Structure probing data (DMS and 2A3) for a 177-nucleotide construct. The 2A3 profile rests on 2,072 reads. The reactions ran in a buffer of 150 mM KOAc, 10 mM MgCl2 and 150 mM bicine (pH 8.5), at 24 C. The DMS profile rests on 2,710 reads.

RNA sequence: GGGAACGACUCGAGUAGAGUCGAAAAAGAGGUAGCUGCGCUGGGGCACCAGCCCGAUCGCUGACCAGAGCCGCUCGGUGUGGUACUCGCGGACGUCGAUACCGUCAACCAAGACCGCGCCAGCGGUCAACUAUCGGCCAUUCGUGGCCGAUAGUUGAAAAGAAACAACAACAACAAC
Reactivity to DMS in 0.01 (KOAc 150mM, MgCl2 10mM, bicine 150mM(pH8.5), 24C), signal-to-noise 4, nucleotides 027 to 126: a070g000a140g000g020u000a040g030c070u000g010c080g020c050u010g010g000g010g000c100a110c200c140a090g010c010c030c030g000a030u000c090g000c050u010g020a110c040c020a130g010a190g000c010c010g030c020u000c110g080g000u000g050u000g000g020u000a030c050u010c300g000c300g000g000a030c000g000u000c030g010a180u010a110c300c010g010u000c020a070a080c070c050a070a040g010a060c000c010g000c020g000c030c050a050g000c010g010g010u000
Reactivity to 2A3 in 0.01 (KOAc 150mM, MgCl2 10mM, bicine 150mM(pH8.5), 24C), signal-to-noise 2, nucleotides 027 to 126: a000g090a050g030g010u070a070g070c190u070g010c020g010c060u030g000g000g060g000c040a050c100c040a060g000c000c000c000g070a050u100c030g010c080u080g050a070c030c010a010g030a030g130c020c020g000c040u090c230g000g040u020g000u030g020g000u100a300c000u040c060g060c110g130g040a050c020g070u140c160g060a110u110a180c060c030g000u020c000a070a090c040c020a050a000g020a000c000c000g020c010g000c040c010a000g000c000g000g000u010